[RMDB]
RNA sequence: GGGAACGACUCGAGUAGAGUCGAAAAGAUAUGGAUCGGCAUGCAAGGCGAGUCGGAAACGACCGCUGAUGACCAUGCGAUCCUAAGUCAAAAUCACUAUACUAACCUUCGGGUUAGUAUAGUGAAAGUAUACUCUUGGGUUCGCCCAAGAGUAUACAAAAGAAACAACAACAACAAC
Reactivity to DMS in 0.01 (KOAc 150mM, MgCl2 10mM, bicine 150mM(pH8.5), 24C), signal-to-noise 6, nucleotides 027 to 126: g000a030u000a300u010g000g000a000u000c000g020g030c010a020u000g000c030a100a150g000g010c010g010a130g020u000c010g000g000a080a120a160c000g020a010c000c010g020c000u000g000a080u010g010a160c300c010a010u000g000c000g000a010u000c000c020u010a010a060g000u000c040a080a070a110a170u000c000a000c000u000a000u000a000c000u000a000a000c000c010u000u010c220g020g000g010u000u000a000g000u010a000u000a000g000u000g000a000a010a120
Reactivity to 2A3 in 0.01 (KOAc 150mM, MgCl2 10mM, bicine 150mM(pH8.5), 24C), signal-to-noise 4, nucleotides 027 to 126: g040a020u090a020u170g010g000a010u010c050g250g050c060a000u000g010c020a070a130g000g000c020g040a150g050u000c010g010g030a070a070a030c010g000a000c000c000g000c000u020g020a110u090g000a010c060c000a000u010g000c000g000a000u020c000c000u020a170a010g060u030c040a000a030a020a280u020c000a000c010u000a000u000a000c000u000a000a000c010c000u030u080c300g030g000g000u000u000a000g010u000a000u000a000g000u000g000a000a000a000